[RMDB]
RNA sequence: GGGAACGACUCGAGUAGAGUCGAAAAAGCAGGAGUACGCUCCUGCAUGGGUAGACGAAUUGACCCCAACUGAAGGUCAAUUCUAACGUUAAAAGGAGUUUUAUAUGACUGGACGUACGCGUCCAGAUGACGAUUUCAUUCUUCGGAAUGAAAUCAACCCUACAAGUCUCUUCGGAGACUUGUAGGGAAAAGAAACAACAACAACAAC
Reactivity to 2A3 in 0.01 (KOAc 150mM, MgCl2 10mM, bicine 150mM(pH8.5), 24C), signal-to-noise 2, nucleotides 027 to 156: a000g030c000a000g000g000a010g010u050a040c290g040c100u000c000c000u000g000c010a010u130g020g000g090u200a090g030a080c080g010a010a000u050u010g000a000c000c010c000c030a090a200c090u200g080a040a060g030g000u000c000a000a000u000u000c000u000a070a040c070g110u070u110a000a010a050a080g090g040a020g020u070u080u230u000a180u020a070u170g110a130c040u040g000g040a020c000g000u060a040c290g000c020g220u000c000c000a000g000a000u050g030a010c120g010a010u020u020u020c000a010u000u000c010u020u060c030g100g000a000a010u000g000a000a000a000u000c000a010a010